Chemical mapping of a 177-nucleotide RNA with DMS and 2A3.
[RMDB]
RNA sequence: GGGAACGACUCGAGUAGAGUCGAAAAGAUAUGGAGACCCAAGGGAGAAACUCGGAAACGAGAAUUUCGACGAUCUUGAAGGUCUCCUAAGUCAAAACUCGACAGUUUCUUCGGAAACUGUCGAGAACCAUUACACAGUCUUCGGACUGUGUAAUGGAAAAGAAACAACAACAACAAC
Reactivity to DMS in 0.01 (KOAc 150mM, MgCl2 10mM, bicine 150mM(pH8.5), 24C), signal-to-noise 2, nucleotides 027 to 126: g000a120u000a300u000g000g010a030g020a010c000c010c010a010a010g000g020g000a020g020a030a020a070c040u000c010g000g020a100a090a200c000g000a010g010a120a180u000u030u010c020g000a130c220g010a050u000c000u000u010g020a160a110g030g000u000c010u000c000c000u000a020a040g000u010c060a040a100a160a190c010u000c000g000a020c020a010g020u000u010u000c000u000u020c240g030g000a010a000a010c000u000g010u010c000g020a010g000a020a080
Reactivity to 2A3 in 0.01 (KOAc 150mM, MgCl2 10mM, bicine 150mM(pH8.5), 24C), signal-to-noise 2, nucleotides 027 to 126: g010a000u070a000u140g010g000a000g000a020c000c000c000a000a030g000g000g010a040g000a010a020a050c010u020c010g020g010a030a050a040c030g040a050g030a300a300u020u020u000c080g010a140c020g010a050u000c000u010u090g070a300a180g030g010u010c000u000c000c000u000a080a000g000u000c010a030a030a060a270c000u010c000g010a000c000a010g000u010u020u000c020u010u090c240g110g000a000a000a010c000u010g010u010c010g010a020g000a010a010

DMS adducts were read by reverse transcription with MarathonRT.